RNA sequence: GGGAACGACUCGAGUAGAGUCGAAAAGAAUGAGUGACAUGUGCCCAACUGGACUUUAGAAUUGCUAUUGAUGAGGGAGUGUUUAUACCUCUUGUUUUCCCUCUUUUUGAAUGGGAGUAUCCAUUGCAAUUUCUAUUCCUAUCUCACCAUCGUGUAAGCUACUCCUGAGUUUCGACUCAGGAGUAGCAAAAGAAACAACAACAACAAC
Reactivity to 2A3 in 0.01 (KOAc 150mM, MgCl2 10mM, bicine 150mM(pH8.5), 24C), signal-to-noise 1, nucleotides 027 to 156: g100a000a030u040g010a010g020u040g000a020c060a100u210g050u150g030c000c000c000a010a010c040u020g060g020a060c070u020u040u140a020g000a020a010u030u010g030c020u030a020u080u050g090a070u020g060a040g000g010g010a030g050u120g000u100u230u200a120u080a030c020c020u010c000u030u070g110u060u030u060u010c030c000c010u060c000u040u050u050u090u040g150a120a060u100g010g010g000a020g050u090a070u000c000c000a000u020u000g010c010a000a020u120u150u090c000u000a000u000u000c010c010u000a070u060c040u020c030a010c040c010a030u030c030g000u020g080u090a200a000

Structure probing data (2A3) for a 207-nucleotide construct. The 2A3 profile rests on 587 reads. The data come from the RNA Mapping Database (RMDB), library OK3TST. Conditions: 150 mM KOAc, 10 mM MgCl2 and 150 mM bicine (pH 8.5), 24 C.